RNA sequence: GGGAACGACUCGAGUAGAGUCGAAAAGAUAUGGACUCGAUGAGCAAUGAUGCCCUGUCGGAAACGAUGGGUUGAGCUCGUUGAGUCCUAAGUCAAAGGUCUAGUAGAGUUCGCUCUACUAGACCAACGCAGUUACUUAGUUCGCUAAGUAACUGCGAAAAGAAACAACAACAACAAC
Reactivity to 2A3 in 0.01 (KOAc 150mM, MgCl2 10mM, bicine 150mM(pH8.5), 24C), signal-to-noise 3, nucleotides 027 to 126: g000a010u010a010u030g000g010a000c000u010c020g000a020u020g010a010g000c000a090a300u030g000a010u000g000c010c030c170u240g240u030c020g010g000a000a000a020c000g000a020u010g000g000g000u020u050g020a000g010c000u000c010g000u020u000g000a000g000u000c000c000u000a010a000g000u000c010a030a110a110g000g000u000c000u010a000g010u000a000g000a010g010u090u150c270g130c080u010c000u010a000c000u010a000g000a000c000c000a000a000
Reactivity to DMS in 0.01 (KOAc 150mM, MgCl2 10mM, bicine 150mM(pH8.5), 24C), signal-to-noise 2, nucleotides 027 to 126: g000a000u000a070u000g000g000a000c000u000c000g050a000u000g020a000g030c030a300a300u020g000a010u000g010c000c000c000u010g060u000c010g020g000a000a000a030c020g000a050u010g000g000g000u000u000g000a010g010c010u000c000g010u000u000g010a010g030u000c000c000u010a000a050g000u010c010a060a080a110g020g000u000c000u000a020g020u000a020g000a020g030u000u000c300g020c000u000c000u000a000c000u000a000g000a000c000c000a020a020